Overview
Structure probing data (2A3) for a 207-nucleotide construct. The 2A3 profile rests on 355 reads. For 2A3 the reverse transcriptase was SuperScript II with manganese. Conditions: 150 mM KOAc, 10 mM MgCl2 and 150 mM bicine (pH 8.5), 24 C. The data come from the RNA Mapping Database (RMDB), library OK3TST.

[RMDB]
RNA sequence: GGGAACGACUCGAGUAGAGUCGAAAAUCAUAGCUUACUUGACGAUCCUAUAGUAUACGACGCUCCUUUUUUCAACAUCUCGGAGGCAACCUUGACCAUCUCGCGCACAAUGUCACCUGCAGGCUUGAUCUCUGUGAUGCUGGCCGAGACAUCGCCCGCUGGGUCUUGGAUUCGUCCAAGACCCAGCAAAAGAAACAACAACAACAAC
Reactivity to 2A3 in 0.01 (KOAc 150mM, MgCl2 10mM, bicine 150mM(pH8.5), 24C), signal-to-noise 1, nucleotides 027 to 156: u080c020a010u060a070g050c010u040u070a000c000u010u090g040a000c070g040a030u020c020c020u030a030u110a240g070u090a040u020a210c150g050a050c120g000c050u120c070c050u090u130u080u100u060u210c200a140a100c000a070u120c040u050c050g040g000a000g000g020c030a090a030c000c040u050u160g010a020c000c010a020u130c060u010c020g100c030g000c040a010c070a170a000u090g020u050c030a000c000c060u120g000c040a000g020g090c030u060u090g100a050u090c000u060c000u010g030u050g020a010u030g000c000u000g000g080c020c000g100a080g000a000c070a000u170c060g060c000c000c060